RNA sequence: GGGAACGACUCGAGUAGAGUCGAAAAGCAUGGAUAUGUUGGGCACUUGGGGAGGGCGAGACAAGGUCCAUGUGCUCCUUCAAAGAUAUCUGAGGUACUCAGUGAUUCUUUUGUGUUAUUUUUAUCUAUCUUCUAGGCCUGGCACUACGCAAACACAAUAUUAUCAUGCCUUCGGGCAUGAUAAUAUAAAAGAAACAACAACAACAAC
Reactivity to 2A3 in 0.01 (KOAc 150mM, MgCl2 10mM, bicine 150mM(pH8.5), 24C), signal-to-noise 4, nucleotides 027 to 156: g010c010a010u030g010g020a000u040a020u170g020u010u060g030g030g010c040a030c050u050u050g030g010g010g000a040g040g030g020c010g020a020g010a030c020a020a030g100g000u010c010c010a020u040g020u030g010c030u070c030c000u050u100c050a040a020a010g020a010u020a020u050c010u020g000a000g140g120u090a150c030u010c010a010g000u010g040a080u120u020c020u040u060u070u050g050u010g040u070u110a170u090u120u030u050u030a080u040c050u010a040u010c000u040u000c010u030a020g020g000c000c010u010g010g010c030a010c080u080a030c060g040c080a070a120a020c040a010c000a070
Reactivity to DMS in 0.01 (KOAc 150mM, MgCl2 10mM, bicine 150mM(pH8.5), 24C), signal-to-noise 1, nucleotides 027 to 156: g010c000a040u010g000g020a080u000a090u020g010u000u000g020g010g010c050a080c060u000u020g000g010g020g040a130g010g030g050c010g030a120g040a020c030a070a070g020g000u000c000c020a050u000g020u000g020c040u000c070c040u000u000c000a030a040a080g010a050u010a090u000c040u000g000a130g040g030u000a070c040u000c030a060g040u000g010a160u000u000c030u010u000u010u010g000u030g020u000u000a100u000u000u000u010u000a120u070c050u000a130u010c010u000u020c030u000a040g010g000c020c030u000g000g000c080a020c020u000a150c040g020c030a040a070a020c040a040c080a110